This 207-nucleotide RNA was probed chemically with DMS and 2A3. The RNA was probed in 150 mM KOAc, 10 mM MgCl2 and 150 mM bicine (pH 8.5) at 24 C. DMS adducts were read by reverse transcription with MarathonRT. Values are in units of 0.01, from 0 to 300, in steps of 10.
RNA sequence: GGGAACGACUCGAGUAGAGUCGAAAAAAUGGAUGAUCAGGCCAAUAGUAGUUGCAUACUAAAGCACCAGUGGGUGAUGAGGAUAUUGGAUUCCUUAAGACUCACUAGCUCUCCAAGUGAACUUCUCUUAUCAGUGAACAAAACCAUUGAAGAUAGAAACGGUAUAAGUGUUCGCACUUAUACCGUUAAAAGAAACAACAACAACAAC
Reactivity to DMS in 0.01 (KOAc 150mM, MgCl2 10mM, bicine 150mM(pH8.5), 24C), signal-to-noise 2, nucleotides 027 to 156: a050a090u000g020g000a140u000g040a150u020c070a120g030g040c030c010a040a110u020a110g010u000a100g010u000u010g010c080a150u000a070c050u000a060a110a120g030c140a170c040c050a060g020u000g010g000g060u000g010a190u020g020a090g010g000a070u000a100u000u010g010g010a220u000u000c030c020u000u000a080a140g010a080c040u010c010a050c010u000a010g010c080u000c000u010c050c050a040a110g000u000g010a070a060c050u000u000c020u000c030u010u000a110u000c040a020g000u000g010a020a100c020a080a040a080a110c080c000a040u010u000g010a030a110g010a150u000a080g000a150
Reactivity to 2A3 in 0.01 (KOAc 150mM, MgCl2 10mM, bicine 150mM(pH8.5), 24C), signal-to-noise 3, nucleotides 027 to 156: a000a000u140g030g000a030u060g000a020u070c070a090g060g000c030c010a060a120u080a040g030u000a000g000u040u120g030c030a040u030a110c020u130a110a050a010g010c020a010c070c040a020g010u030g010g000g030u070g030a150u120g020a010g030g010a010u020a050u160u130g140g010a140u170u070c000c000u000u010a040a040g020a030c000u000c020a020c000u000a010g040c000u020c000u000c050c020a070a040g040u020g050a050a050c050u090u020c020u050c000u080u050a050u150c010a030g040u010g080a060a030c040a110a110a000a020c030c000a010u010u080g010a070a020g040a040u090a070g150a040